Source: RMDB library OK3TST, as collected in RNAgym. The record gives the reactivity of an RNA of 207 nucleotides to 2A3. The RNA was probed in 150 mM KOAc, 10 mM MgCl2 and 150 mM bicine (pH 8.5) at 24 C.
[RMDB]
RNA sequence: GGGAACGACUCGAGUAGAGUCGAAAAUCAGACGUCUGAUAAUCCAGUCUUUAAUGAAUUAACGAGAUAUAUGCGAAUUAAAAAUACGGUUAACGAUUGGAAAUCAUUAACGGAUAGCAAAACAAAAUUAGAAAGUGAUAGAGGUAGACUUCUAGCCUAAAUGCUUUCGGUUCGCCGAAAGCAUUUAAAAAGAAACAACAACAACAAC
Reactivity to 2A3 in 0.01 (KOAc 150mM, MgCl2 10mM, bicine 150mM(pH8.5), 24C), signal-to-noise 1, nucleotides 027 to 156: u080c010a030g060a180c020g060u120c090u050g050a040u080a210a000u020c000c030a050g060u000c010u040u000u070a100a030u050g150a020a120u070u070a130a040c050g020a020g060a150u030a020u030a020u270g040c000g080a080a080u140u230a120a200a000a000a050u110a060c020g110g000u000u000a040a040c020g000a010u000u000g020g000a020a090a030u020c000a030u000u110a010a000c050g000g020a000u030a060g090c030a000a040a000a040c030a000a050a020a050u060u040a010g130a080a100a020g080u080g030a050u040a120g050a000g030g000u050a020g020a050c000u020u020c020u030a050g060c000c000